[RMDB]
RNA sequence: GGGAACGACUCGAGUAGAGUCGAAAACCCGGAUGGAGAAAGUCUAAACGGAUCCUGUGAGGCCGCCGUGAGGAUCGGGUAAGACGAACAGUCGAAUGCUGCCAGCCCAUUGGGUGAACAGAAGGGGUCAUAUCCACGCAUUCGUGCGUGGAUAUGAAAAAGAAACAACAACAACAAC
Reactivity to DMS in 0.01 (KOAc 150mM, MgCl2 10mM, bicine 150mM(pH8.5), 24C), signal-to-noise 4, nucleotides 027 to 126: c040c000c010g010g000a070u000g000g000a050g000a060a110a100g020u010c020u000a040a100a150c070g000g000a070u010c020c000u070g050u000g020a120g010g030c040c080g020c000c030g000u010g020a110g010g010a080u000c030g000g020g000u000a090a100g010a010c050g020a120a140c110a160g000u010c030g030a070a050u020g000c000u000g020c020c040a210g000c040c020c020a130u030u040g010g000g010u000g010a120a180c060a060g010a070a090g000g000g010g020
Reactivity to 2A3 in 0.01 (KOAc 150mM, MgCl2 10mM, bicine 150mM(pH8.5), 24C), signal-to-noise 3, nucleotides 027 to 126: c000c000c000g030g010a110u070g000g040a040g060a080a180a010g070u010c000u060a090a120a040c050g020g010a020u030c000c010u030g060u070g070a130g070g000c020c020g000c000c000g060u010g020a040g030g010a060u080c030g010g000g020u020a070a000g000a010c050g010a080a010c040a050g040u080c050g050a040a030u130g020c000u010g000c010c020a020g000c030c000c040a060u070u140g030g010g010u070g010a030a020c020a030g080a090a050g060g010g000g000
Chemical mapping of a 177-nucleotide RNA with DMS and 2A3. 2A3 adducts were read by reverse transcription with SuperScript II with manganese. The RNA was probed in 150 mM KOAc, 10 mM MgCl2 and 150 mM bicine (pH 8.5) at 24 C. Source: RMDB libraries RFM100 and RFMREP, as collected in RNAgym. DMS adducts were read by reverse transcription with MarathonRT. For 2A3, 2,204 sequencing reads were counted.